[RMDB]
This 177-nucleotide RNA was probed chemically with 2A3 and DMS. Values cover nucleotides 27 to 126. The reactions ran in a buffer of 150 mM KOAc, 10 mM MgCl2 and 150 mM bicine (pH 8.5), at 24 C. It was measured as part of the RMDB library OK2TRN.
RNA sequence: GGGAACGACUCGAGUAGAGUCGAAAAUGGUCAAUCAGUUGCGCUAGCGCCUGACGCUGAGUAGAGGUGAGAUAAGGGCGGAAAUAACCCUGCAUAUGCAUCAAUACAUUGGUAUGGUUCGCCACUGCUAGUUGAGAGAUUUCGAUCUCUCAACUAGAAAAGAAACAACAACAACAAC
Reactivity to 2A3 in 0.01 (KOAc 150mM, MgCl2 10mM, bicine 150mM(pH8.5), 24C), signal-to-noise 6, nucleotides 027 to 126: u080g010g020u070c050a030a060u030c020a050g050u080u050g050c020g000c060u070a060g040c010g010c070c030u050g020a050c040g000c040u040g030a010g010u020a030g030a040g010g030u030g040a090g010a050u080a110a060g020g000g000c040g050g070a060a120a040u130a040a050c000c010c010u010g000c030a050u110a020u210g030c010a020u050c040a050a060u080a120c070a130u030u120g030g000u050a050u100g000g040u030u040c020g000c040c000a040c030u030g020
Reactivity to DMS in 0.01 (KOAc 150mM, MgCl2 10mM, bicine 150mM(pH8.5), 24C), signal-to-noise 9, nucleotides 027 to 126: u000g010g010u010c060a110a100u010c050a060g010u010u010g010c050g020c070u010a100g020c060g010c050c040u000g010a090c120g000c030u000g010a080g010u010a040g010a230g000g010u000g010a070g010a080u010a100a070g010g000g030c040g010g000a060a080a100u010a090a100c040c010c030u000g000c090a080u000a070u000g000c040a040u010c060a060a090u010a060c080a090u000u000g000g010u000a080u000g010g010u000u000c070g000c020c020a060c170u000g000
For DMS the reverse transcriptase was MarathonRT.